[RMDB]
RNA sequence: GGGAACGACUCGAGUAGAGUCGAAAAGAUAUGGAUCGCGAGAGACAUGGAAGAGGCGUCGGAAACGACGCUACCCACCUUCAAUGUGGAAUGCGAUCCUAAGUCAAAACACUGGUUCGCCAGUGAAUCUAAACGUAGUGUUCGCACUACGUUUAGAAAAAGAAACAACAACAACAAC
Reactivity to 2A3 in 0.01 (KOAc 150mM, MgCl2 10mM, bicine 150mM(pH8.5), 24C), signal-to-noise 6, nucleotides 027 to 126: g040a020u080a040u180g000g000a000u000c010g000c050g030a090g000a000g020a230c010a030u050g040g020a010a010g010a010g010g000c010g000u000c000g010g010a040a060a030c010g010a000c000g000c000u010a020c030c030c010a060c000c010u030u020c030a050a040u040g010u030g090g080a110a060u110g010c000g000a000u000c000c000u000a040a000g030u000c030a050a020a110a110c010a000c000u000g000g060u090u100c220g090c120c010a000g010u010g040a020a150
Reactivity to DMS in 0.01 (KOAc 150mM, MgCl2 10mM, bicine 150mM(pH8.5), 24C), signal-to-noise 9, nucleotides 027 to 126: g000a060u010a300u010g000g010a010u000c010g020c010g000a110g020a300g000a050c010a010u000g000g000a000a020g000a140g000g000c010g020u000c000g010g000a130a130a200c000g010a030c000g020c000u000a010c050c040c110a300c110c010u000u000c020a070a020u000g010u000g000g000a200a170u000g010c000g000a000u000c000c000u000a020a070g010u000c050a080a080a140a210c010a010c000u000g000g010u000u010c260g010c000c000a000g000u000g010a080a090
Background:
Chemical mapping of a 177-nucleotide RNA with 2A3 and DMS. Conditions: 150 mM KOAc, 10 mM MgCl2 and 150 mM bicine (pH 8.5), 24 C.